[RMDB]
RNA sequence: GGGAACGACUCGAGUAGAGUCGAAAAUGAAAUCGCUCGCCUUGCUGGUGAGCUGCGCGACCGCCCUGUGCGCGUGCGCAUCGCCCCCGCCGCAGGUGGGGGCUGUAGUGGUGGCGCCGCAGGUGACCCCUACAUGGUGAUUCGUCACCAUGUAGGGAAAAGAAACAACAACAACAAC
Reactivity to DMS in 0.01 (KOAc 150mM, MgCl2 10mM, bicine 150mM(pH8.5), 24C), signal-to-noise 4, nucleotides 027 to 126: u010g000a060a100a080u010c130g020c010u000c010g020c010c010u000u010g010c260u000g000g020u000g010a030g010c000u000g010c040g000c040g000a150c030c010g020c020c020c030u010g020u000g010c040g010c060g040u000g020c020g030c010a040u000c120g000c000c020c000c000c000g020c010c020g020c280a080g050g070u000g000g010g000g000g000c000u000g010u000a030g010u000g020g020u000g000g010c010g010c060c050g030c020a030g000g000u000g010a180c150
Reactivity to 2A3 in 0.01 (KOAc 150mM, MgCl2 10mM, bicine 150mM(pH8.5), 24C), signal-to-noise 3, nucleotides 027 to 126: u130g030a000a010a070u110c070g000c030u030c010g000c000c020u150u300g080c160u170g030g000u020g000a010g020c000u020g030c030g000c010g070a160c010c000g000c000c000c010u040g000u010g000c060g000c030g040u070g020c020g000c010a020u050c030g000c010c000c000c010c010g010c010c030g280c190a120g000g000u010g020g000g000g000g000c010u040g010u030a120g010u090g070g010u020g020g020c010g000c040c060g020c020a000g050g100u140g110a060c000
An RNA of 177 nucleotides, treated with DMS and 2A3 and read out base by base. DMS adducts were read by reverse transcription with MarathonRT. 2A3 is a SHAPE reagent: it acylates the 2'-hydroxyl of flexible nucleotides of all four kinds.